[RMDB]
Annotation:
This 207-nucleotide RNA was probed chemically with DMS and 2A3. DMS (dimethyl sulfate) methylates the pairing face of unpaired adenines and cytosines. The RNA was probed in 150 mM KOAc, 10 mM MgCl2 and 150 mM bicine (pH 8.5) at 24 C. For DMS the reverse transcriptase was MarathonRT. Reactivities are given for positions 27 through 156. 2A3 adducts were read by reverse transcription with SuperScript II with manganese. The DMS profile rests on 3,208 reads.

RNA sequence: GGGAACGACUCGAGUAGAGUCGAAAAGACGUGGAGGUUCCGCGCCCUCCUUUGCGCGUAAGUACGUCGAAAUUCGGUGCUUCGGAUCGCACCGUUGGAUCCAUUUGAUAUCCGCUUUGUGCCGCGGUUGGGCAUUUACACUUACCCGAAAGGGGAAGAGCUACUCAGUAUUCGUACUGAGUAGCUCAAAAGAAACAACAACAACAAC
Reactivity to DMS in 0.01 (KOAc 150mM, MgCl2 10mM, bicine 150mM(pH8.5), 24C), signal-to-noise 2, nucleotides 027 to 156: g000a070c040g010u000g030g000a090g020g030u000u000c050c040g020c050g050c220c010c040u000c050c020u000u000u000g010c050g030c060g040u000a040a090g020u020a100c050g020u010c090g020a080a060a210u000u000c030g010g010u000g000c030u010u020c040g000g010a200u000c210g000c020a060c020c000g010u000u000g010g000a110u000c070c030a170u000u010u000g010a200u010a110u000c000c000g030c120u000u010u000g020u020g030c000c030g040c080g060g000u000u000g030g000g040c020a050u000u000u000a120c070a050c110u000u000a160c000c000c000g020a080a110a130g000g000g000g000a070a120
Reactivity to 2A3 in 0.01 (KOAc 150mM, MgCl2 10mM, bicine 150mM(pH8.5), 24C), signal-to-noise 3, nucleotides 027 to 156: g020a010c030g010u060g020g100a060g060g110u130u050c050c020g000c020g000c010c010c000u180c020c090u090u110u100g000c020g000c010g030u030a010a050g030u030a040c040g010u000c040g040a020a040a050u070u080c040g000g000u000g000c020u140u140c040g090g040a110u070c060g000c000a010c000c010g000u010u040g000g000a030u000c000c000a120u110u050u150g140a100u100a070u120c000c010g010c050u110u140u150g050u080g040c050c010g010c040g020g000u110u100g030g000g000c000a020u020u020u130a080c070a030c060u110u120a050c000c000c020g010a060a040a000g000g000g010g020a030a020